[RMDB]
Structure probing data (2A3 and DMS) for a 177-nucleotide construct. For DMS, 1,142 sequencing reads were counted.
RNA sequence: GGGAACGACUCGAGUAGAGUCGAAAAAGAGAGCGCGAAAAAGAUCGAUCGAUCGUUUGAACGCGCAAGUUUAAGUUUGAUACGGGCAUACUAGCAAGCUAGCUAGCAAAACAAACUUAAUAAAGAACCAUCGGUUAAUGUUCGCAUUAACCGAUGGAAAAGAAACAACAACAACAAC
Reactivity to 2A3 in 0.01 (KOAc 150mM, MgCl2 10mM, bicine 150mM(pH8.5), 24C), signal-to-noise 1, nucleotides 027 to 126: a000g120a000g000a020g010c030g000c010g110a090a030a000a010a000g020a010u000c030g040a130u240c160g000a010u020c070g090u060u060u070g080a180a080c000g000c010g000c030a010a000g000u000u030u010a000a030g000u000u000u020g100a100u090a130c030g020g070g000c100a020u080a120c000u030a000g000c030a120a030g180c020u130a060g000c000u000a010g000c050a050a000a050a000c020a040a000a000c020u030u030a030a020u050a090a130a060g080a040a030
Reactivity to DMS in 0.01 (KOAc 150mM, MgCl2 10mM, bicine 150mM(pH8.5), 24C), signal-to-noise 2, nucleotides 027 to 126: a090g000a200g000a110g010c000g060c000g020a060a080a000a080a040g000a010u000c000g010a160u000c190g010a010u000c000g010u010u000u000g020a250a080c010g010c000g020c020a040a030g000u000u000u000a010a000g010u000u000u000g020a080u010a150c240g000g010g020c090a100u010a090c010u000a020g010c010a110a180g020c110u000a070g000c020u000a040g000c010a020a070a100a210c000a000a010a010c000u000u000a000a010u000a100a060a150g000a070a110
Reactivities are given for positions 27 through 126.